[RMDB]
RNA sequence: GGGAACGACUCGAGUAGAGUCGAAAAAGUUACACCUCACUCACAUUUUACCAACAGAGUGAGAGUGAGGAUUACCUCUCAUUUCUGUUGGUGAACGCAGAAGUUAGAGGUAAUCUUCACUGACAACUGCGUUCAAAGUUGUGAGUGAAGUGUAACACGACUGUUGUAUGUUCGCAUACAACAGUCGAAAAGAAACAACAACAACAAC
Reactivity to 2A3 in 0.01 (KOAc 150mM, MgCl2 10mM, bicine 150mM(pH8.5), 24C), signal-to-noise 5, nucleotides 027 to 156: a010g000u010u000a000c000a000c010c000u000c000a000c000u020c010a000c000a020u040u060u060u120a060c040c020a020a050c020a070g080a040g080u050g020a030g040a000g020u080g010a070g070g020a060u040u130a050c010c000u000c000u000c000a010u070u250u010c010u000g070u070u110g040g070u030g030a060a010c030g000c000a000g000a030a020g010u000u010a030g020a020g040g030u020a020a010u020c010u030u030c020a010c020u000g020a010c010a020a030c010u040g030c030g030u040u050c060a030a030a060g060u060u020g000u020g000a000g000u000g000a000a000g000u000g000u000a000a000c000a000
Reactivity to DMS in 0.01 (KOAc 150mM, MgCl2 10mM, bicine 150mM(pH8.5), 24C), signal-to-noise 1, nucleotides 027 to 156: a100g000u000u000a030c010a010c000c000u010c000a000c000u010c010a060c030a040u000u000u000u000a170c120c020a130a040c000a000g000a050g050u020g000a150g010a040g010u020g030a040g010g000a130u000u010a050c040c020u000c000u000c090a020u000u000u000c000u010g000u000u000g070g080u000g020a020a090c120g020c050a020g000a030a220g030u000u000a050g070a040g000g020u000a030a090u000c010u010u010c010a070c030u010g020a020c020a030a220c000u000g000c080g000u000u000c120a150a160a120g000u040u000g100u000g000a000g050u000g000a000a010g010u000g000u000a000a040c020a110

Record summary:
Source: RMDB library OK3TST, as collected in RNAgym. Chemical mapping of a 207-nucleotide RNA with 2A3 and DMS. For 2A3 the reverse transcriptase was SuperScript II with manganese. For DMS, 2,387 sequencing reads were counted.